[RMDB]
RNA sequence: GGGAACGACUCGAGUAGAGUCGAAAAGUGAGUGGAAACCCGCUUUAUUCACUGGGGUCGACAGCUCUGGGGAGAGAAGGGAGGAUCGGAUGGGAAGAGUAUAUCCUAUGGGAAUCCCCGUCCUCCCAUGGGCCAACGUUCGCGUUGGCCAAAAGAAACAACAACAACAAC
Reactivity to DMS in 0.01 (KOAc 150mM, MgCl2 10mM, bicine 150mM(pH8.5), 24C), signal-to-noise 2, nucleotides 027 to 129: g000u010g010a030g020u010g100g010a050a240a050c000c070c040g000c020u000u010u070a030u010u040c050a030c130u020g000g020g000g030u030c010g050a050c090a170g080c080u010c050u000g080g000g010g010a060g000a010g050a100a080g030g000g030a040g000g050a080u030c060g060g020a110u030g020g010g030a140a140g020a000g050u030a000u000a070u040c020c040u010a040u000g000g020g000a140a090u030c090c000c000c110g010u040c020c010u020c010c000c000a080u060g000
Reactivity to 2A3 in 0.01 (KOAc 150mM, MgCl2 10mM, bicine 150mM(pH8.5), 24C), signal-to-noise 3, nucleotides 027 to 129: g050u030g050a000g000u040g030g030a040a050a050c000c010c000g010c010u090u140u080a120u070u100c120a060c100u000g020g020g000g000u040c000g030a040c030a030g000c040u010c020u100g010g000g010g000a080g010a000g000a070a010g000g050g000a060g020g000a020u080c020g050g020a020u010g050g010g020a000a070g120a050g100u030a010u000a040u150c020c020u050a070u110g050g000g020a020a050u050c000c000c000c000g050u020c010c040u000c040c000c000a030u010g010
About this RNA
Structure probing data (DMS and 2A3) for a 170-nucleotide construct. The data come from the RNA Mapping Database (RMDB), library 15KLIB. Conditions: 150 mM KOAc, 10 mM MgCl2 and 150 mM bicine (pH 8.5), 24 C. Values are in units of 0.01, from 0 to 300, in steps of 10. DMS adducts were read by reverse transcription with MarathonRT.